[RMDB]
Chemical mapping of a 177-nucleotide RNA with DMS. The reactions ran in a buffer of 150 mM KOAc, 10 mM MgCl2 and 150 mM bicine (pH 8.5), at 24 C. DMS adducts were read by reverse transcription with MarathonRT.

RNA sequence: GGGAACGACUCGAGUAGAGUCGAAAAUGAUUGUUGGCGUCAAGGUAUUCAGAGAUCGGCAAUGUGACGAUGACAUCAACAGGCUGCGCUUUCAGGCCGGUCUGCUGUAGCGCAUGCUGAAUGGCCACACCCCCUACAUCUUCGGAUGUAGGGGGUGAAAAGAAACAACAACAACAAC
Reactivity to DMS in 0.01 (KOAc 150mM, MgCl2 10mM, bicine 150mM(pH8.5), 24C), signal-to-noise 1, nucleotides 027 to 126: u000g010a050u020u000g020u000u000g020g000c080g000u000c020a130a170g000g010u000a060u010u000c070a060g020a090g000a080u000c000g000g010c060a080a060u020g000u030g030a080c110g000a080u040g000a080c090a080u000c030a030a060c050a060g000g020c000u000g000c210g000c020u000u000u040c160a080g010g000c020c040g000g030u000c030u000g020c080u000g000u000a080g000c120g030c060a020u010g030c020u020g000a030a040u000g000g000c050c050a170